Chemical mapping of a 207-nucleotide RNA with 2A3. The data come from the RNA Mapping Database (RMDB), library OK3TST. The RNA was probed in 150 mM KOAc, 10 mM MgCl2 and 150 mM bicine (pH 8.5) at 24 C.
RNA sequence: GGGAACGACUCGAGUAGAGUCGAAAAGCAUGCGAAAGGAUGGCUCGCUUCGCCGUACGGAAACCAUCCCGUACGGAAACCAUCCCUACUACCAUACGUUAGCUUCCAGUCAAGGAUGGGAAAGCAUGCGCGUACGGAAACCAUCCCACGACACACGUCGAUACGAACCUUUCGAGGUUCGUAUCGAAAAAGAAACAACAACAACAAC
Reactivity to 2A3 in 0.01 (KOAc 150mM, MgCl2 10mM, bicine 150mM(pH8.5), 24C), signal-to-noise 2, nucleotides 027 to 156: g030c010a020u020g020c040g010a110a000a030g010g000a010u000g020g000c070u060c180g040c090u150u130c130g030c030c010g000u000a000c010g020g020a040a140a070c030c020a110u090c000c000c000g000u000a000c000g000g000a010a000a000c000c000a020u030c000c000c000u050a110c040u030a020c000c050a060u060a120c060g080u070u100a000g020c020u140u080c090c060a050g040u060c070a090a020g030g020a010u050g000g000g010a000a100a000g010c020a000u010g030c050g000c010g080u070a120c080g050g030a130a000a000c040c000a030u000c000c000c010a100c190g080a000c010a010c010a000c120g100

For 2A3, 1,381 sequencing reads were counted.